[RMDB]
An RNA of 177 nucleotides, treated with 2A3 and DMS and read out base by base. 2A3 adducts were read by reverse transcription with SuperScript II with manganese. The RNA was probed in 150 mM KOAc, 10 mM MgCl2 and 150 mM bicine (pH 8.5) at 24 C. Values cover nucleotides 27 to 126. DMS adducts were read by reverse transcription with MarathonRT. 2A3 is a SHAPE reagent: it acylates the 2'-hydroxyl of flexible nucleotides of all four kinds.
RNA sequence: GGGAACGACUCGAGUAGAGUCGAAAAACGGUGGCCGGUAGCAAUGGCUUGUGGUUCGUUUAGAGACUGCUUGCUUAUAACACUUGGCCAGAACGAAAAUCUAUCUAAUAUCCGUAGCGUCAUAAUGCUCAUCUAGCUUCUUCGGAAGCUAGAUGAGAAAAGAAACAACAACAACAAC
Reactivity to 2A3 in 0.01 (KOAc 150mM, MgCl2 10mM, bicine 150mM(pH8.5), 24C), signal-to-noise 5, nucleotides 027 to 126: a000c030g030g010u000g000g000c010c000g010g030u040a030g040c070a070a080u040g000g000c000u000u020g000u010g000g020u060u040c030g050u070u110u300a090g020a020g010a060c000u000g010c010u000u020g000c010u130u060a090u130a150a030c040a010c070u280u300g010g000c000c000a010g010a020a000c030g020a020a010a020a100u050c020u070a070u020c010u040a070a120u070a140u090c040c030g040u030a010g010c000g090u090c030a050u060a230a050u180g020
Reactivity to DMS in 0.01 (KOAc 150mM, MgCl2 10mM, bicine 150mM(pH8.5), 24C), signal-to-noise 2, nucleotides 027 to 126: a080c030g000g060u000g000g010c000c000g000g000u000a030g040c210a160a180u000g000g000c000u000u000g030u010g000g000u020u000c030g040u060u040u020a110g000a130g000a010c000u000g000c000u000u000g040c000u000u020a120u010a150a170c140a030c010u010u060g070g000c030c000a060g000a100a060c070g010a100a050a100a080u020c060u010a060u000c050u020a090a070u020a090u050c030c040g030u000a030g010c070g060u010c040a130u020a090a080u060g000